[RMDB]
RNA sequence: GGGAACGACUCGAGUAGAGUCGAAAACAGGACGUUAGCAUAGGUCCAAUUUACUAUGCAGAUUGCAUCGUCGGAGACGACGUAGAGACCGCGACAGCAGGGUCGAUGACCUGCUGAAUUACACCUCUUUUCAUAGCGAGGGAUCAAGCUAUGUACAAGUGCUGAUAUUAUUCGUAAUAUCAGCACUAAAAGAAACAACAACAACAAC
Reactivity to DMS in 0.01 (KOAc 150mM, MgCl2 10mM, bicine 150mM(pH8.5), 24C), signal-to-noise 4, nucleotides 027 to 156: c020a140g010g000a080c060g020u010u000a160g030c040a040u000a030g030g010u010c080c090a060a090u000u000u000a100c010u000a010u000g020c010a220g020a100u000u000g010c040a100u000c020g020u000c020g010g010a300g000a300c050g000a030c000g030u000a070g000a100g010a160c030c010g000c050g040a230c020a040g000c000a020g010g000g020u010c060g000a170u010g010a100c000c010u000g010c010u020g000a030a050u010u020a070c060a050c050c010u000c000u000u010u000u000c000a020u000a010g010c020g010a130g030g010g010a110u000c050a100a190g010c010u000a020u000g010u000a070c120a080
Reactivity to 2A3 in 0.01 (KOAc 150mM, MgCl2 10mM, bicine 150mM(pH8.5), 24C), signal-to-noise 5, nucleotides 027 to 156: c050a020g040g030a020c040g030u130u120a030g010c010a020u010a020g000g030u040c020c000a010a010u080u030u030a050c010u020a010u020g010c010a050g110a300u140u260g010c030a040u060c010g020u000c000g030g000a060g020a050c030g000a000c000g000u040a060g030a010g020a050c040c030g020c020g080a040c000a010g000c000a000g050g030g050u130c140g090a100u260g080a020c000c000u000g000c000u000g010a000a030u120u090a040c050a040c010c000u010c040u050u100u120u100c020a010u000a000g020c000g020a020g040g050g030a020u170c040a030a000g000c000u000a000u030g030u030a070c040a110